[RMDB]
RNA sequence: GGGAACGACUCGAGUAGAGUCGAAAAGAUAUGGAUCCAGGGUGGGAGCUUGGAUUUAUCGGAAACGAUUGUCAGCUCGCACCUGGAUCCUAAGUCAAAGUCGUUCCGAGUUCGCUCGGAACGACAACCGUCAAUUAAUGUUCGCAUUAAUUGACGGAAAAGAAACAACAACAACAAC
Reactivity to 2A3 in 0.01 (KOAc 150mM, MgCl2 10mM, bicine 150mM(pH8.5), 24C), signal-to-noise 7, nucleotides 027 to 126: g020a010u080a050u150g000g000a000u000c020c020a040g200g150g150u100g030g290g010a010g010c070u140u190g210g030a050u300u300u130a030u020c010g040g020a080a040a040c010g000a010u010u020g020u020c000a010g000c000u020c070g240c020a000c000c010u000g000g010a000u000c000c000u000a020a000g000u000c050a160a050a010g000u000c000g000u000u000c000c000g000a000g010u090u140c220g030c090u000c000g000g000a000a010c000g000a000c000a000a010
Reactivity to DMS in 0.01 (KOAc 150mM, MgCl2 10mM, bicine 150mM(pH8.5), 24C), signal-to-noise 4, nucleotides 027 to 126: g010a060u000a300u010g000g000a010u000c000c010a000g010g020g030u010g010g010g000a010g000c010u000u000g040g000a020u000u010u000a010u000c010g010g000a130a120a170c010g000a010u000u000g000u000c000a050g000c010u000c010g000c010a030c010c010u000g000g000a000u000c000c000u000a010a060g010u010c040a090a120a110g010u000c000g010u000u000c000c000g010a010g010u000u000c240g020c000u000c000g000g010a000a000c010g010a000c010a020a050